This 177-nucleotide RNA was probed chemically with 2A3 and DMS. For DMS the reverse transcriptase was MarathonRT. Values cover nucleotides 27 to 126. Conditions: 150 mM KOAc, 10 mM MgCl2 and 150 mM bicine (pH 8.5), 24 C. The DMS profile rests on 72,324 reads.
RNA sequence: GGGAACGACUCGAGUAGAGUCGAAAAGGAUCCAUCCUAGUCAAGAAGGUAACUGGAUCAUAUCCAGUUACCUCUGACUAGGAUGGUUGUCAUUGUACACGAGGAUGGCAACGUGAAUAAUGGAACGCUAGUAGAGUGUAUUCGUACAUUCUACUAGAAAAGAAACAACAACAACAAC
Reactivity to 2A3 in 0.01 (KOAc 150mM, MgCl2 10mM, bicine 150mM(pH8.5), 24C), signal-to-noise 9, nucleotides 027 to 126: g080g030a020u020c000c000a000u000c000c000u000a000g000u000c030a080a060g140a060a020g100g000u000a000a000c000u010g000g010a010u050c090a020u070a050u120c000c000a000g000u000u000a000c000c000u000c000u000g000a000c000u000a000g000g000a000u000g000g000u000u010g000u000c000a000u010u040g060u060a030c060a010c060g050a030g140g040a090u110g110g000c050a060a020c030g030u040g040a060a030u100a050a030u040g050g020a090a020c050g000
Reactivity to DMS in 0.01 (KOAc 150mM, MgCl2 10mM, bicine 150mM(pH8.5), 24C), signal-to-noise 9, nucleotides 027 to 126: g010g010a120u010c020c000a010u000c000c000u000a000g010u000c000a030a070g010a110a040g020g010u000a000a010c000u000g000g000a030u000c230a080u020a300u000c000c000a000g000u000u000a000c000c000u000c000u000g000a010c000u000a000g000g000a000u000g000g010u000u000g000u010c010a030u000u000g020u000a090c020a040c060g000a120g010g010a060u000g010g010c070a080a090c020g010u000g000a090a050u000a040a030u000g010g000a090a150c130g000